Chemical mapping of a 177-nucleotide RNA with 2A3 and DMS. It was measured as part of the RMDB library RFM100.
[RMDB]
RNA sequence: GGGAACGACUCGAGUAGAGUCGAAAAAGUAGUUAACGUAGACGUAGACCCGCAGAGUCCGUUUGUCGUGCAACUGCAAAAGAGCUUCCCGCAAUUUGAGGUAGUAGCACAGCAGGUCACUCCAAAUAAGUCCCGUAAGAUUCGUCUUACGGGACUUAAAAGAAACAACAACAACAAC
Reactivity to 2A3 in 0.01 (KOAc 150mM, MgCl2 10mM, bicine 150mM(pH8.5), 24C), signal-to-noise 2, nucleotides 027 to 126: a000g060u100a000g010u000u000a120a000c030g000u040a020g000a010c040g050u030a020g000a000c000c030c000g000c160a060g000a030g000u010c000c000g000u000u000u000g260u190c070g000u030g060c030a020a010c000u000g010c000a030a020a030a020g130a010g020c000u020u000c000c000c010g020c030a080a100u150u080u050g020a020g010g010u110a040g000u050a000g050c000a020c050a080g040c000a010g020g020u000c030a010c070u100c030c000a090a010a010u020
Reactivity to DMS in 0.01 (KOAc 150mM, MgCl2 10mM, bicine 150mM(pH8.5), 24C), signal-to-noise 2, nucleotides 027 to 126: a060g010u000a030g000u000u020a090a040c030g040u000a050g000a080c010g040u050a090g010a040c040c020c220g030c300a190g010a140g000u010c020c030g010u000u000u000g000u060c020g000u000g000c290a020a010c010u020g030c000a090a080a090a080g000a080g030c160u000u000c000c000c000g040c140a040a080u000u050u000g000a040g020g000u000a020g000u020a010g000c000a030c080a080g000c060a030g000g050u000c020a170c030u000c100c010a010a090a010u010
The 2A3 profile rests on 975 reads. The reactions ran in a buffer of 150 mM KOAc, 10 mM MgCl2 and 150 mM bicine (pH 8.5), at 24 C.